RNA sequence: GGGAACGACUCGAGUAGAGUCGAAAAGAAAGGCUCACUUAAAGCAGAAUUACGAUCUAAAGAGAAAGUGCAGGAGAACAAGACGAGAGUCUUUACAUCAGCACCAUAUGACGUUCUCCUUGGUGGGUCUCCUUUUAGUCUUCGGACUAAAAGGAGAAAAAGAAACAACAACAACAAC
Reactivity to DMS in 0.01 (KOAc 150mM, MgCl2 10mM, bicine 150mM(pH8.5), 24C), signal-to-noise 4, nucleotides 027 to 126: g010a080a150a050g000g010c010u010c010a030c020u000u010a030a060a070g040c170a030g000a070a080u010u000a190c080g000a150u000c030u010a100a070a130g000a130g010a090a090a120g000u000g010c020a100g010g000a040g000a070a070c290a020a010g000a010c010g000a190g000a200g000u000c020u000u000u000a080c160a100u010c010a050g020c030a050c030c040a070u010a070u000g000a050c050g000u000u000c010u000c140c030u000u000g010g020u000g000g000g000
Reactivity to 2A3 in 0.01 (KOAc 150mM, MgCl2 10mM, bicine 150mM(pH8.5), 24C), signal-to-noise 3, nucleotides 027 to 126: g060a020a150a020g020g000c000u020c020a030c030u100u150a120a020a000g030c020a020g040a090a090u140u100a080c030g090a150u040c040u160a090a110a030g160a040g050a090a120a020g020u020g000c020a020g080g130a030g000a040a020c020a040a020g000a000c010g020a010g000a010g130u000c000u010u030u030a080c070a070u000c010a000g010c010a020c010c010a050u070a120u300g040a030c010g000u000u010c000u000c020c020u000u040g020g000u020g000g000g000
Chemical mapping of a 177-nucleotide RNA with DMS and 2A3.
For 2A3, 3,479 sequencing reads were counted.
2A3 is a SHAPE reagent: it acylates the 2'-hydroxyl of flexible nucleotides of all four kinds.
The DMS profile rests on 3,282 reads.
Source: RMDB library OK2TRN, as collected in RNAgym.